[RMDB]
RNA sequence: GGGAACGACUCGAGUAGAGUCGAAAAUUCACUGUGACUCGUACCCCGUUUGAUGGUCGUGGUGUUGUGGUUUUACAGGAUUGGAAACAGCCAGAGGGACUCAUCAAGGAUUCUGGUAACGACACUGCUACUAAAGGGUCUGAUGAGUACCAUGUGACGUUGAUAAGGUAUUCGUACCUUAUCAACGAAAAGAAACAACAACAACAAC
Reactivity to DMS in 0.01 (KOAc 150mM, MgCl2 10mM, bicine 150mM(pH8.5), 24C), signal-to-noise 2, nucleotides 027 to 156: u000u000c030a060c030u000g040u010g010a040c020u010c020g020u000a110c040c000c000c030g040u000u010u010g010a140u000g020g030u000c050g030u010g020g020u020g000u000u000g020u000g000g020u010u000u000u000a140c070a090g000g010a110u000u000g020g000a150a060a110c050a130g020c030c020a080g020a150g030g000g010a100c040u000c030a070u020c060a080a130g040g000a070u010u000c020u000g000g020u000a090a030c000g020a150c120a080c100u000g020c040u000a040c020u000a040a100a030g000g020g020u000c060u010g000a070u000g000a070g030u000a030c020c020a080u000g000u000g010a200
Reactivity to 2A3 in 0.01 (KOAc 150mM, MgCl2 10mM, bicine 150mM(pH8.5), 24C), signal-to-noise 6, nucleotides 027 to 156: u050u020c020a020c040u060g060u100g090a020c000u020c040g030u070a100c000c010c000c040g060u090u250u150g210a220u140g020g020u040c030g020u020g000g000u020g010u010u050g030u070g030g080u030u040u030u060a100c050a060g060g120a170u120u180g060g040a060a050a010c010a020g030c020c000a020g030a080g060g050g030a070c020u020c060a120u050c040a140a050g070g000a020u020u010c000u010g000g020u060a080a030c010g070a020c020a020c110u130g020c010u010a000c000u040a030a150a130g020g000g000u030c060u080g050a040u030g000a000g000u030a150c010c010a040u130g020u020g030a020